[RMDB]
RNA sequence: GGGAACGACUCGAGUAGAGUCGAAAAUUGUUUUACAGUGUUAGUGAUCCAUUCCCUUUGACGAUCCCUAGGUGGAGAUGGGGCAUGAGGAUCCUCCAGGGGAAAAGCUCACUACCACUGGGCAACAUUACCAUUAAACGUUCGCGUUUAAUGGUAAAAAAGAAACAACAACAACAAC
Reactivity to 2A3 in 0.01 (KOAc 150mM, MgCl2 10mM, bicine 150mM(pH8.5), 24C), signal-to-noise 9, nucleotides 027 to 126: u030u020g040u010u020u020u070a060c010a010g000u000g000u000u000a000g000u000g010a010u030c030c040a090u020u030c000c000c000u010u000u010g010a010c010g000a000u020c010c010c020u080a130g120g090u170g130g170a250g040a180u290g040g020g030g020c040a040u120g040a130g080g000a000u000c000c000u000c000c020a010g010g000g000g000a000a000a000a010g010c000u000c000a000c000u000a000c010c010a000c000u000g000g020g010c020a020a030c000a060
Reactivity to DMS in 0.01 (KOAc 150mM, MgCl2 10mM, bicine 150mM(pH8.5), 24C), signal-to-noise 5, nucleotides 027 to 126: u010u000g000u000u000u000u010a060c000a010g000u000g010u000u000a020g020u000g020a010u000c050c160a300u010u000c000c000c000u000u000u000g000a050c300g000a020u000c000c010c030u020a110g010g030u010g010g010a110g000a080u010g000g000g020g020c070a070u000g000a130g000g000a010u010c000c060u000c010c090a040g000g000g010g000a010a010a130a180g000c190u000c000a010c000u010a020c040c000a020c000u000g000g000g000c120a030a040c110a210